An RNA of 177 nucleotides, treated with 2A3 and DMS and read out base by base. Conditions: 150 mM KOAc, 10 mM MgCl2 and 150 mM bicine (pH 8.5), 24 C. The data come from the RNA Mapping Database (RMDB), library OK1LIB. For 2A3, 2,407 sequencing reads were counted. For 2A3 the reverse transcriptase was SuperScript II with manganese.
RNA sequence: GGGAACGACUCGAGUAGAGUCGAAAACGAUGGCCAGUGACUUACUGAUUCUGGAGUUUCCAAUCACAAUGUAAGGAUUUGGUGCGUGUCUUAGUAUUCGAGUUUCCUCAGCUGGCCAAGCGCAGAGCUAAGACGUGCAGUUCGCUGCACGUCUUAGAAAAGAAACAACAACAACAAC
Reactivity to 2A3 in 0.01 (KOAc 150mM, MgCl2 10mM, bicine 150mM(pH8.5), 24C), signal-to-noise 5, nucleotides 027 to 126: c010g080a090u100g040g000c000c000a010g000u040g110a070c010u010u040a000c020u050g030a030u100u110c030u150g130g020a170g100u080u190u000c020c010a020a030u070c020a020c060a120a180u190g080u140a120a060g050g030a060u110u050u180g050g010u040g020c060g000u080g030u030c040u040u080a080g010u060a090u010u060c050g010a040g010u000u040u020c040c030u080c060a050g000c020u040g000g000c030c010a010a000g040c000g020c040a040g000a030g130
Reactivity to DMS in 0.01 (KOAc 150mM, MgCl2 10mM, bicine 150mM(pH8.5), 24C), signal-to-noise 3, nucleotides 027 to 126: c030g000a080u030g000g000c010c000a000g040u010g010a280c020u020u020a030c010u000g000a040u000u010c150u020g050g010a100g010u010u080u000c010c000a010a070u000c030a160c210a080a040u020g040u000a010a000g010g010a090u000u010u000g000g020u000g010c030g040u020g000u010c060u020u010a080g020u030a070u020u000c020g000a090g000u010u000u010c010c070u000c130a060g030c020u000g020g050c030c020a030a090g000c010g010c160a030g000a110g000